[RMDB]
Chemical mapping of a 207-nucleotide RNA with 2A3. Source: RMDB library M2RFPK, as collected in RNAgym. Reactivities are given for positions 27 through 156. The reactions ran in a buffer of 150 mM KOAc, 10 mM MgCl2 and 150 mM bicine (pH 8.5), at 24 C. 2A3 adducts were read by reverse transcription with SuperScript II with manganese.
RNA sequence: GGGAACGACUCGAGUAGAGUCGAAAAAGUUUUGCCUGUUAGGUGAGGCUCCUAUGCAAACACAGGACACUGCCCAAAAAUGUCCAAAGACGCCAAUGGGUAGAACAGGGAUUGUCGGAUUAAGGCUAAAACAGCCCAUGCUUCGGCAUGGGCUGAAGUAGACAUCCAUGUUCGCAUGGAUGUCUACAAAAGAAACAACAACAACAAC
Reactivity to 2A3 in 0.01 (KOAc 150mM, MgCl2 10mM, bicine 150mM(pH8.5), 24C), signal-to-noise 1, nucleotides 027 to 156: a000g040u030u040u070u060g030c000c000u080g100u150u130a030g000g030u050g040a050g000g020c010u020c030c020u090a080u180g010c050a020a120a000c010a010c010a080g030g050a010c020a010c100u030g000c010c000c010a000a000a000a030a030u040g000u010c030c020a170a070a140g020a010c030g010c020c000a010a000u060g000g000g000u020a000g000a040a010c020a030g000g080g000a060u010u000g030u130c000g020g000a000u150u160a030a030g030g000c030u030a040a040a000a000c030a010g000c000c000c000a000u010g000c000u030u100c230g090g040c000a010u090g040g010g060c000u000g000a000a000